[RMDB]
RNA sequence: GGGAACGACUCGAGUAGAGUCGAAAAGGGCACCACAUCCCUGGGCUUGCAGGGAAAGGAGAAGCUGAGUCAGGGCUCGCAAGGCCCUGGGCUCCAGGAACAGCAGUGGAGGCCAUCGGGGAGGGUCAAACUCAAUGUCCUUCGGGACAUUGAGUUUAAAAGAAACAACAACAACAAC
Reactivity to DMS in 0.01 (KOAc 150mM, MgCl2 10mM, bicine 150mM(pH8.5), 24C), signal-to-noise 2, nucleotides 027 to 126: g000g000g020c040a120c050c030a060c060a200u010c000c020c000u000g010g010g020c090u000u000g020c050a020g000g000g000a050a060a050g010g000a090g000a080a120g010c060u000g000a080g000u020c000a030g010g010g000c010u000c030g000c300a190a300g010g000c000c000c000u000g030g020g020c010u000c060c070a030g000g020a060a110c130a080g040c100a090g000u000g000g020a130g010g030c040c050a070u020c070g000g000g010g010a070g030g010g000u000c070